[RMDB]
RNA sequence: GGGAACGACUCGAGUAGAGUCGAAAAUCAUUAUAGUUCGCUAUAAUGACGAAAGGGCGUGUGGUCUAGUGGUAUGAUUCUCGCUUUGGGUGCGAGAGGCCCUGGGUUCAAUUCCCAGCUCGCCCCCCAGCUUAAGUCGCAGCUUCGGCUGCGACAACAAGACUUACUAAUUCGUUAGUAAGUCUUGAAAAGAAACAACAACAACAAC
Reactivity to 2A3 in 0.01 (KOAc 150mM, MgCl2 10mM, bicine 150mM(pH8.5), 24C), signal-to-noise 3, nucleotides 027 to 156: u010c000a000u000u000a000u010a010g030u040u050c210g000c090u000a000u000a000a000u020g000a010c030g070a130a060a070g010g010g000c000g000u020g000u030g030g020u030c010u020a040g030u030g110g060u150a050u070g060a050u070u020c020u010c010g050c070u110u160u180g240g050g080u180g010c000g000a000g010a010g030g000c030c000c000u000g020g000g000u040u010c020a010a010u030u000c010c000c000a000g020c010u020c010g000c000c010c040c000c000c000a040g030c010u150u160a170a020g000u000c000g000c010a000g010c020u050u140c230g080g000c000u000g000c000g010a000c000a000a000
Reactivity to DMS in 0.01 (KOAc 150mM, MgCl2 10mM, bicine 150mM(pH8.5), 24C), signal-to-noise 2, nucleotides 027 to 156: u000c010a000u000u010a000u010a000g040u000u000c270g070c000u000a000u000a010a000u000g020a000c000g000a070a110a080g000g050g030c000g070u000g000u000g010g000u000c050u000a110g000u000g030g030u000a050u000g030a170u000u000c010u000c010g020c040u000u000u040g030g010g030u010g010c000g020a050g010a050g000g000c050c050c010u010g020g000g030u000u000c090a090a300u000u000c000c000c020a100g010c020u010c030g010c030c000c010c010c010c030a130g020c040u010u010a030a130g030u000c000g060c020a000g000c110u010u010c300g070g020c000u000g000c010g010a010c010a010a060